[RMDB]
RNA sequence: GGGAACGACUCGAGUAGAGUCGAAAAACGGGGUAAGAGCUGAACGCAUCUAAGCUCGAAACCCACCUGGAAACGAGGAACCACCGAGGCCACUCCUACAAGAGGAGAUCGAUAGACUCGGGGUGUAAUCUGAAUGAUAUUUCGAUAUCAUUCAGAUAAAAGAAACAACAACAACAAC
Reactivity to DMS in 0.01 (KOAc 150mM, MgCl2 10mM, bicine 150mM(pH8.5), 24C), signal-to-noise 9, nucleotides 027 to 126: a100c270g010g010g010g000u010a090a280g000a000g030c000u000g000a140a140c180g010c130a040u010c040u000a210a060g010c000u000c000g000a050a110a090c000c000c000a090c030c020u000g010g000a070a050a060c080g010a090g010g020a120a050c020c010a100c010c000g010a010g000g010c050c050a120c010u000c000c000u010a140c300a120a130g010a030g000g000a010g000a040u020c130g010a130u030a100g000a090c000u000c000g000g000g000g000u000g010u010a080
Reactivity to 2A3 in 0.01 (KOAc 150mM, MgCl2 10mM, bicine 150mM(pH8.5), 24C), signal-to-noise 9, nucleotides 027 to 126: a000c040g010g010g010g010u040a060a020g000a000g000c010u020g040a140a020c100g020c110a020u040c040u090a040a010g000c000u000c000g000a010a000a000c000c000c000a030c000c000u030g070g080a080a090a030c060g030a080g070g060a020a010c000c030a100c020c000g000a010g010g020c030c010a020c000u000c000c000u090a140c070a200a070g060a030g230g000a000g000a050u180c090g060a060u040a150g060a050c000u000c000g020g000g000g000u020g010u050a020